An RNA of 177 nucleotides, treated with 2A3 and DMS and read out base by base. For 2A3, 2,283 sequencing reads were counted. The DMS profile rests on 2,643 reads. The reactions ran in a buffer of 150 mM KOAc, 10 mM MgCl2 and 150 mM bicine (pH 8.5), at 24 C.
[RMDB]
RNA sequence: GGGAACGACUCGAGUAGAGUCGAAAAGGAUAACAGCGCAAUCUCCUUCAAGAGCCCAUAUCGACAAGGAGGUUUACGACCUCGAUGUUGGAUCAGGACAUCCUAAUGGUGCAGUCGCUAUUAAGGGUGGUUCAGGAUUAUUCGUAAUCCUGAACCAAAAAGAAACAACAACAACAAC
Reactivity to 2A3 in 0.01 (KOAc 150mM, MgCl2 10mM, bicine 150mM(pH8.5), 24C), signal-to-noise 3, nucleotides 027 to 126: g060g010a030u100a180a090c050a030g040c030g000c060a040a070u030c020u000c030c020u020u050c080a060a060g020a040g070c000c030c000a050u120a030u080c030g050a040c050a010a050g140g010a010g040g060u010u030u100a080c130g060a030c000c000u040c020g050a040u040g030u020u040g030g030a050u060c060a050g010g080a040c000a020u030c000c010u010a070a070u060g030g000u050g040c090a070g190u230c030g020c050u010a010u030u090a040a100g050g000g000
Reactivity to DMS in 0.01 (KOAc 150mM, MgCl2 10mM, bicine 150mM(pH8.5), 24C), signal-to-noise 4, nucleotides 027 to 126: g010g020a080u000a120a120c070a040g010c040g010c080a120a100u010c040u000c010c030u010u010c090a070a130g000a070g000c060c010c060a120u010a060u010c010g020a080c070a030a090g020g000a030g010g010u000u010u010a100c260g010a070c020c010u010c030g000a110u000g010u010u020g020g000a100u000c180a160g000g000a070c090a040u000c010c020u010a050a040u000g020g010u000g000c170a120g010u010c070g020c010u000a030u000u000a050a120g000g010g000